[RMDB]
RNA sequence: GGGAACGACUCGAGUAGAGUCGAAAACUGCUUCAGGAAACCAUGCAAAGGAGCAGCUCGCUGUGUCAACUUUUUGGAUGGAAACUGAUCAGCCUGGACGGUAACAGCGCCUCCAUUGCGUUGAUAGAUAGUGCCACUGAUUCGUCAGUGGCACUAUAAAAGAAACAACAACAACAAC
Reactivity to DMS in 0.01 (KOAc 150mM, MgCl2 10mM, bicine 150mM(pH8.5), 24C), signal-to-noise 3, nucleotides 027 to 126: c010u010g000c060u020u020c050a050g000g000a100a200a190c130c050a010u000g000c010a050a020a070g000g020a270g000c070a000g000c030u040c280g000c020u000g010u030g020u030c090a060a100c100u020u010u000u020u000g010g000a000u020g000g000a060a120a180c000u010g000a060u040c020a070g000c050c000u000g000g000a110c140g030g010u000a090a060c090a050g000c180g000c030c030u000c030c040a070u040u000g010c130g000u000u020g000a120u010a040g000
Reactivity to 2A3 in 0.01 (KOAc 150mM, MgCl2 10mM, bicine 150mM(pH8.5), 24C), signal-to-noise 3, nucleotides 027 to 126: c010u000g040c030u020u010c030a000g030g050a070a130a130c050c000a030u100g040c030a020a050a160g070g020a030g010c000a020g010c070u110c150g080c020u040g020u060g080u220c030a130a150c080u160u140u010u040u040g080g000a050u000g000g050a090a090a110c000u000g010a050u040c020a050g040c000c010u040g040g080a020c100g000g000u060a150a040c030a010g030c000g010c080c000u030c020c050a070u030u170g020c050g030u040u020g050a020u000a050g160